[RMDB]
RNA sequence: GGGAACGACUCGAGUAGAGUCGAAAACGCUCAGCAGCAACUGCUGGCUGUCAUCGUCAUCGGCGGUCGCUGCCGGAAGCGCCUCAGAAACCGCUGUCAGUGCUUCCGACGGGAUUGAUGACUCCGCAGAGCCGUAGGAAUUCGUUCCUACGGCUCUAAAAGAAACAACAACAACAAC
Reactivity to 2A3 in 0.01 (KOAc 150mM, MgCl2 10mM, bicine 150mM(pH8.5), 24C), signal-to-noise 2, nucleotides 027 to 126: c040g060c030u290c090a000g010c020a000g000c060a100a260c130u030g000c010u020g060g030c050u040g020u010c040a080u070c020g050u000c000a130u070c110g100g010c070g050g060u080c020g000c200u070g000c010c000g020g000a010a040g000c020g040c010c020u030c000a040g120a190a220a080c090c060g040c120u000g050u090c050a020g000u010g030c030u040u040c000c000g000a020c020g020g030g000a020u020u300g000a000u010g000a020c010u030c020c010g030c040
Reactivity to DMS in 0.01 (KOAc 150mM, MgCl2 10mM, bicine 150mM(pH8.5), 24C), signal-to-noise 2, nucleotides 027 to 126: c130g010c020u010c020a070g020c020a000g000c160a070a080c100u000g050c030u000g000g010c040u000g000u000c050a060u000c060g000u000c060a070u000c040g000g010c080g010g010u020c020g010c010u000g020c030c020g020g000a110a040g030c030g010c020c090u010c100a060g020a070a150a100c260c170g030c030u010g010u000c120a130g020u000g010c080u000u000c010c000g000a020c050g020g000g000a040u000u020g010a030u000g000a050c040u000c000c030g000c150